[RMDB]
RNA sequence: GGGAACGACUCGAGUAGAGUCGAAAAGAUAUGGAAUCACGAUAGGGAGCUAUAGGUCGGAAACGACCUACUAGCAUCGAUCUAUGUGAUUCCUAAGUCAAAACCCUGCAUGUUCGCAUGCAGGGAAGCUUAAGACCAAGUUCGCUUGGUCUUAAGCAAAAGAAACAACAACAACAAC
Reactivity to 2A3 in 0.01 (KOAc 150mM, MgCl2 10mM, bicine 150mM(pH8.5), 24C), signal-to-noise 2, nucleotides 027 to 126: g010a000u000a000u060g000g010a020a000u010c000a010c050g110a020u040a030g100g090g060a280g080c010u010a000u000a030g010g000u000c000g000g030a020a020a010c010g000a010c020c020u000a020c040u010a000g000c010a020u180c170g080a090u000c010u000a000u000g010u000g010a000u010u000c000c000u000a010a000g020u010c010a000a020a110a300c010c000c000u000g000c010a000u000g010u070u140c300g000c200a000u000g000c010a000g000g020g010a000a020
Reactivity to DMS in 0.01 (KOAc 150mM, MgCl2 10mM, bicine 150mM(pH8.5), 24C), signal-to-noise 2, nucleotides 027 to 126: g000a020u000a050u020g010g020a030a010u000c000a020c000g030a040u000a020g000g010g010a200g010c000u010a030u000a000g000g000u000c010g000g000a010a020a040c010g000a010c000c000u000a000c300u000a010g010c000a160u010c300g000a130u000c010u000a010u000g000u000g000a010u000u000c010c000u000a000a050g000u010c000a100a060a130a170c000c000c000u000g020c000a000u010g010u000u030c210g050c010a010u000g000c030a010g030g000g000a010a010